[RMDB]
RNA sequence: GGGAACGACUCGAGUAGAGUCGAAAAGAUUCGUCAGCCGCAUGCCCAGGUGGCCGCGAUCUUCAAGGCUACGGCGCCGAUAGGUCCGCGCUGAUCGUUUUCCUCCAACGACGCUAUGGCGUCUUUCAAAAUCGGCAUCGGUUCGCCGAUGCCGAAAGAGCAAUGAAUGGUUCGCCAUUCAUUGCUCAAAAGAAACAACAACAACAAC
Reactivity to 2A3 in 0.01 (KOAc 150mM, MgCl2 10mM, bicine 150mM(pH8.5), 24C), signal-to-noise 1, nucleotides 027 to 156: g080a020u120u090c000g020u010c040a010g000c050c050g000c040a120u300g010c000c010c010a000g040g000u010g240g000c000c000g040c070g040a070u030c010u200u160c130a210a100g160g000c050u090a000c000g060g000c000g000c000c000g120a130u110a180g000g040u020c000c010g000c000g000c000u000g020a080u000c010g000u000u040u000u050c000c010u000c000c040a070a050c110g000a000c010g000c020u210a120u300g150g020c000g000u020c000u050u180u020c050a070a030a120a120u060c010g000g000c000a000u000c000g020g020u030u040c160g040c010c000g000a000u000g000c000c000g020a000a000a000

The record gives the reactivity of an RNA of 207 nucleotides to 2A3. For 2A3, 474 sequencing reads were counted. Reactivities are given for positions 27 through 156. It was measured as part of the RMDB library M2RFPK.